RNA sequence: GGGAACGACUCGAGUAGAGUCGAAAAUAAUUAGGGAGCAAAGCUCGAUGCAUCACAUAGGCAUCCACAUAACCCAAUUGGCGGUGAUUAAACGCGCCAGGCAAGGUGGCGAUAAUCUCAAAGCCUACUUUACAAGGCUGUUCGCAGCCUUGUAAAGAAAAGAAACAACAACAACAAC
Reactivity to 2A3 in 0.01 (KOAc 150mM, MgCl2 10mM, bicine 150mM(pH8.5), 24C), signal-to-noise 1, nucleotides 027 to 126: u120a000a100u130u090a030g050g000g000a040g020c100a160a060a030g000c020u050c060g000a010u040g010c020a010u050c050a040c080a210u130a030g140g000c000a000u030c050c010a110c020a040u180a080a050c000c000c000a010a100u050u080g000g000c030g030g000u050g030a070u070u100a040a020a020c020g000c000g020c130c000a000g010g000c030a000a070g000g010u020g060g000c000g030a000u020a020a020u000c000u010c050a100a090a000g020c000c000u000a020
Reactivity to DMS in 0.01 (KOAc 150mM, MgCl2 10mM, bicine 150mM(pH8.5), 24C), signal-to-noise 2, nucleotides 027 to 126: u010a120a120u040u000a140g000g000g000a020g010c140a040a090a120g030c050u000c170g010a020u000g000c010a080u000c100a020c150a090u000a090g010g020c020a070u000c010c070a040c080a080u000a070a140c020c000c000a040a100u020u010g000g000c010g010g010u000g020a060u000u010a040a040a100c040g020c000g000c070c000a080g000g000c250a160a110g020g000u000g000g010c100g000a090u010a030a000u000c210u000c060a010a180a070g020c020c000u000a120

Notes:
An RNA of 177 nucleotides, treated with 2A3 and DMS and read out base by base. Source: RMDB library OK2TST, as collected in RNAgym. DMS adducts were read by reverse transcription with MarathonRT.